[RMDB]
Structure probing data (2A3) for a 177-nucleotide construct. Conditions: 150 mM KOAc, 10 mM MgCl2 and 150 mM bicine (pH 8.5), 24 C.
RNA sequence: GGGAACGACUCGAGUAGAGUCGAAAACGCUCAAGAAUCUACCGGAAGAUGUGAUUCAAACCUCACCACGUCCCAGUUCACGGAUCUGUUUUGCUGGGUCCUGGCAGCAUCGGAAGGGGAGCCACAACGGUAUCAAGCCGUUCGCGGCUUGAUACCGAAAAGAAACAACAACAACAAC
Reactivity to 2A3 in 0.01 (KOAc 150mM, MgCl2 10mM, bicine 150mM(pH8.5), 24C), signal-to-noise 2, nucleotides 027 to 126: c080g050c030u040c050a080a130g100a030a060u040c030u050a270c050c040g000g000a010a000g050a030u020g030u050g060a030u160u060c050a140a110a140c000c050u050c000a050c000c000a000c060g010u000c000c000c000a000g030u040u120c020a000c050g040g150a150u030c010u160g120u030u080u160u000g020c000u000g050g000g000u020c000c040u020g000g040c000a010g030c000a010u000c000g000g000a000a050g000g000g000g000a010g010c030c010a120c070a150a000

The data come from the RNA Mapping Database (RMDB), library OK1LIB. Reactivities are given for positions 27 through 126.